Structure probing data (2A3 and DMS) for a 177-nucleotide construct. The reactions ran in a buffer of 150 mM KOAc, 10 mM MgCl2 and 150 mM bicine (pH 8.5), at 24 C. The DMS profile rests on 8,578 reads. For 2A3, 3,660 sequencing reads were counted. Values cover nucleotides 27 to 126.

[RMDB]
RNA sequence: GGGAACGACUCGAGUAGAGUCGAAAAUGUGUAAACACCAAAGCUAUGGUUAACCCUAUCUGCCCCUUAGGUCUACAGCCAGUAGAGUCAGAUAGCUGGGUCUUAGGCCUUCAGCUUUCAUAACUGGCAUAACUUGGGGAUUCGUCCCCAAGUUAUGAAAAGAAACAACAACAACAAC
Reactivity to 2A3 in 0.01 (KOAc 150mM, MgCl2 10mM, bicine 150mM(pH8.5), 24C), signal-to-noise 2, nucleotides 027 to 126: u150g060u010g020u050a040a140a000c050a030c030c040a030a030a000g040c030u050a030u140g010g030u050u080a060a060c010c000c000u010a040u030c040u030g050c000c020c010c000u040u060a020g010g010u000c040u100a070c050a020g020c000c000a030g010u030a000g040a020g050u030c010a000g000a030u000a020g030c080u050g040g010g000u030c040u090u150a120g000g040c000c000u100u140c070a000g000c000u050u000u000c050a070u110a210a050c040u020g070g010
Reactivity to DMS in 0.01 (KOAc 150mM, MgCl2 10mM, bicine 150mM(pH8.5), 24C), signal-to-noise 7, nucleotides 027 to 126: u000g020u000g010u010a080a090a100c100a110c030c050a060a080a070g010c050u000a060u000g010g010u000u000a080a150c040c010c020u000a030u000c040u000g010c070c010c020c040u010u000a130g000g010u000c050u020a110c280a120g000c010c010a050g010u000a030g010a070g010u000c080a050g000a020u000a010g010c060u000g010g010g010u000c090u020u010a120g020g000c010c010u010u010c080a010g010c010u000u000u000c070a080u000a070a080c070u000g000g010